[RMDB]
RNA sequence: GGGAACGACUCGAGUAGAGUCGAAAAUAAAAAUGGUUCGACAGCAAUUGCAGCCGGUUUCCUCUGACGCUUUAACUCCAUUGAAACAAGCGGUUGAUCAAGAUAUCACAGCACUGUCAGCCGUUCAUAUGCGGCUAAUAUUCGUAUUAGCCGCAUAAAAAGAAACAACAACAACAAC
Reactivity to DMS in 0.01 (KOAc 150mM, MgCl2 10mM, bicine 150mM(pH8.5), 24C), signal-to-noise 2, nucleotides 027 to 126: u010a030a060a040a080a060u010g020g010u000u010c080g040a080c050a070g010c060a090a180u000u010g020c030a080g000c080c020g070g020u000u010u000c020c060u000c070u010g000a040c070g000c050u000u020u000a090a130c090u000c040c080a060u010u010g000a140a070a160c160a100a080g000c000g010g010u000u000g010a060u020c090a110a070g010a130u000a070u000c220a110c200a120g000c110a100c050u000g020u000c000a030g000c010c000g050u020u000c100a110
Reactivity to 2A3 in 0.01 (KOAc 150mM, MgCl2 10mM, bicine 150mM(pH8.5), 24C), signal-to-noise 1, nucleotides 027 to 126: u090a020a020a030a020a010u010g040g010u040u090c060g030a030c060a020g040c010a060a170u070u160g020c040a020g060c020c020g060g040u010u010u030c040c040u060c030u020g070a090c020g020c060u010u060u040a020a030c010u020c050c040a120u080u180g090a070a130a010c070a080a070g040c010g020g020u000u050g150a120u100c100a060a020g020a010u090a020u200c020a020c000a100g110c040a010c040u010g010u020c000a000g000c000c020g000u000u010c000a000

Background: The record gives the reactivity of an RNA of 177 nucleotides to DMS and 2A3. For 2A3 the reverse transcriptase was SuperScript II with manganese. For DMS, 1,020 sequencing reads were counted.